Chemical mapping of a 177-nucleotide RNA with DMS and 2A3. For 2A3, 990 sequencing reads were counted. For DMS, 1,253 sequencing reads were counted.

RNA sequence: GGGAACGACUCGAGUAGAGUCGAAAACAUUACCAGAAACAGGUAGUGAAAAUAACGGCUCAAAUAACGCAACGUUAUUUGGUGGAUUAUUUGCAGCAUUAGGUUCAUUAUUGUUAUUCGGUCGUCGGAAGUUUGUGUGUUUCGACACACAAACUUCAAAAGAAACAACAACAACAAC
Reactivity to DMS in 0.01 (KOAc 150mM, MgCl2 10mM, bicine 150mM(pH8.5), 24C), signal-to-noise 1, nucleotides 027 to 126: c100a060u000u000a000c000c000a170g060a130a110a040c230a070g010g000u010a010g000u000g000a010a010a000a060u040a060a120c170g000g000c010u030c000a030a000a000u000a000a030c040g020c230a240a040c130g000u060u020a010u000u000u000g010g000u010g030g000a090u000u000a050u000u000u000g010c100a150g000c110a060u020u010a010g000g020u000u000c010a030u000u000a230u000u000g000u030u000a080u000u030c000g010g000u010c070g010u000c060g000
Reactivity to 2A3 in 0.01 (KOAc 150mM, MgCl2 10mM, bicine 150mM(pH8.5), 24C), signal-to-noise 3, nucleotides 027 to 126: c040a010u000u070a000c000c000a090g190a060a080a010c020a060g040g000u010a000g030u030g000a000a150a070a000u150a100a010c040g040g020c010u030c050a000a010a040u010a030a000c000g020c230a150a120c180g030u080u090a040u070u050u000g060g040u090g040g030a080u070u020a110u140u120u080g100c080a030g040c020a080u060u150a030g030g020u050u000c020a020u000u120a020u070u120g100u120u050a020u060u030c030g000g010u010c050g010u000c030g080

Overview:
The data come from the RNA Mapping Database (RMDB), library OK1LIB. Conditions: 150 mM KOAc, 10 mM MgCl2 and 150 mM bicine (pH 8.5), 24 C. Values cover nucleotides 27 to 126.